[RMDB]
RNA sequence: GGGAACGACUCGAGUAGAGUCGAAAAGAAAAGAAAACUCACUGCAAUUUAGAGAAACUCGGUGUCACGAUAAUAAGUGAUGCGACGCAACUCUAGAUUUGCGCGUCGGGGCAGUGAGGAAAGAAAAGGCAUACAAAAACUUCGGUUUUUGUAUGCCAAAAGAAACAACAACAACAAC
Reactivity to 2A3 in 0.01 (KOAc 150mM, MgCl2 10mM, bicine 150mM(pH8.5), 24C), signal-to-noise 3, nucleotides 027 to 126: g010a000a030a000a000g020a040a110a010a010c000u000c000a010c000u000g000c010a010a010u000u000u070a030g040a030g000a070a130a010c020u020c070g150g040u030g000u000c000a000c020g030a030u100a250a100u190a300a020g010u000g000a010u020g000c000g040a040c110g000c060a120a120c000u000c020u050a000g020a030u030u020u190g070c190g000c020g090u070c040g010g010g060g000c000a030g000u000g020a000g010g030a010a070a020g050a010a090a020a000
Reactivity to DMS in 0.01 (KOAc 150mM, MgCl2 10mM, bicine 150mM(pH8.5), 24C), signal-to-noise 2, nucleotides 027 to 126: g010a140a090a100a170g030a080a070a070a110c030u000c000a020c000u010g030c000a070a020u000u000u000a000g000a020g000a020a220a180c180u010c000g070g040u010g010u000c000a000c000g000a190u000a210a080u030a150a070g000u010g000a020u000g000c000g020a020c120g000c120a170a160c000u000c010u000a010g030a050u000u010u070g000c070g010c090g000u000c020g000g030g000g020c040a030g010u000g000a070g010g010a060a040a030g010a070a080a080a080